The data come from the RNA Mapping Database (RMDB), library OK1LIB.
This 177-nucleotide RNA was probed chemically with 2A3 and DMS.
Reactivities are given for positions 27 through 126.

RNA sequence: GGGAACGACUCGAGUAGAGUCGAAAAACUAGUAUGUACAGGGGUGAGUUGACCUGUCAUCUAGACUGCUGACCAUCAACUCACCGGUCAGCUGGAUGAUGUCGACAGAGUACGACAUCAGUACUCAGACAAAGGAUGCCUUCGGGUAUCUUUUGUCAAAAGAAACAACAACAACAAC
Reactivity to 2A3 in 0.01 (KOAc 150mM, MgCl2 10mM, bicine 150mM(pH8.5), 24C), signal-to-noise 9, nucleotides 027 to 126: a000c010u010a010g050u130a060u060g070u090a010c000a010g030g030g040g060u150g100a130g050u070u060g100a080c000c010u000g010u000c000a000u000c000u010a020g070a130c050u040g000c000u000g000a000c010c000a040u120c050a060a110c060u040c110a060c030c070g000g000u000c000a000g000c010u020g040g020a050u040g000a000u010g010u010c010g000a030c050a100g200a070g140u260a090c010g000a000c010a010u000c000a000g010u040a060c040u030c090a020
Reactivity to DMS in 0.01 (KOAc 150mM, MgCl2 10mM, bicine 150mM(pH8.5), 24C), signal-to-noise 9, nucleotides 027 to 126: a230c010u000a010g000u050a010u000g000u050a010c000a010g000g000g010g010u020g010a090g020u010u000g000a070c020c020u000g000u000c000a010u000c010u000a010g000a200c060u000g000c010u010g000a010c010c050a150u030c110a050a070c100u020c100a080c180c130g000g000u000c000a010g000c000u010g000g000a120u000g000a000u000g000u000c000g010a070c040a200g010a200g010u030a050c000g000a010c010a010u000c000a030g010u020a050c060u010c070a220